[RMDB]
RNA sequence: GGGAACGACUCGAGUAGAGUCGAAAACAUCAGAGUGGGCUGACCGAUCUGUGAAGAUCUGGGAUCAUGACUCAGUAUAACAAGAAGAGUCCUACACAUUUGAUUCAGGAAAUUUGGGCUCCUGGCCAGUGUGGUAUUCUUUCGAGAAUACCACACUAAAAGAAACAACAACAACAAC
Reactivity to DMS in 0.01 (KOAc 150mM, MgCl2 10mM, bicine 150mM(pH8.5), 24C), signal-to-noise 4, nucleotides 027 to 126: c080a050u000c050a040g000a030g020u020g020g010g030c170u000g020a170c040c010g010a140u000c000u000g010u020g000a210a040g010a030u000c010u010g030g000g010a080u000c120a110u020g000a040c020u000c010a070g010u010a120u000a080a100c170a070a100g010a110a130g010a100g000u000c000c100u000a150c090a030c050a110u000u000u000g010a060u000u000c020a010g010g000a030a080a130u000u010u000g010g000g010c110u000c030c020u000g000g000c110c060
Reactivity to 2A3 in 0.01 (KOAc 150mM, MgCl2 10mM, bicine 150mM(pH8.5), 24C), signal-to-noise 3, nucleotides 027 to 126: c030a020u090c030a030g040a030g090u070g020g070g000c070u040g030a050c000c020g040a050u040c000u020g090u070g100a050a010g000a040u030c070u170g010g000g080a080u080c040a040u120g050a040c000u010c030a000g020u080a080u050a240a120c130a110a000g110a070a000g020a040g030u030c030c030u170a040c030a000c010a150u090u130u100g030a070u080u080c040a000g020g130a010a080a140u120u130u130g030g050g010c010u030c000c000u040g000g000c010c040